[RMDB]
Chemical mapping of a 177-nucleotide RNA with 2A3 and DMS. DMS adducts were read by reverse transcription with MarathonRT.

RNA sequence: GGGAACGACUCGAGUAGAGUCGAAAACAAAGCAUGCCGUUCCGGGCAAGGCGGUACCCGAUCCGCAAGAAGGCCACGGCCGAAAAGCGAAAGGGGAUGUGGCCGGUCCGGCAACCAAACGGACAAAGUGCAUGGAUGAGUUCGCUCAUCCAUGCACAAAAGAAACAACAACAACAAC
Reactivity to 2A3 in 0.01 (KOAc 150mM, MgCl2 10mM, bicine 150mM(pH8.5), 24C), signal-to-noise 1, nucleotides 027 to 126: c080a000a000a030g080c080a020u170g010c000c010g000u030u000c010c000g030g000g120c000a000a060g000g000c040g050g000u060a030c130c000c000g000a000u130c150c040g000c010a000a060g090a040a000g070g050c000c000a050c120g000g000c000c000g120a000a000a000a000g040c070g050a060a010a080g060g020g040g010a010u120g050u070g140g030c020c000g000g000u000c010c000g000g000c080a000a000c040c000a180a060a070c000g090g000a000c030a000a230a000
Reactivity to DMS in 0.01 (KOAc 150mM, MgCl2 10mM, bicine 150mM(pH8.5), 24C), signal-to-noise 1, nucleotides 027 to 126: c090a130a300a080g000c120a140u140g130c040c000g070u000u000c000c000g000g000g000c050a000a000g110g000c000g000g000u000a000c000c000c000g050a210u000c140c130g000c000a050a130g040a300a000g000g000c000c050a180c300g000g000c020c000g000a040a040a000a050g000c130g000a000a160a300g000g000g000g040a040u000g000u070g000g000c050c180g000g000u000c000c000g000g000c300a000a090c140c110a000a040a000c000g000g000a110c180a000a230a110
The data come from the RNA Mapping Database (RMDB), library OK1LIB. Values cover nucleotides 27 to 126. The reactions ran in a buffer of 150 mM KOAc, 10 mM MgCl2 and 150 mM bicine (pH 8.5), at 24 C. In probing experiments dimethyl sulfate is read out at A N1 and C N3, which are open when not base-paired.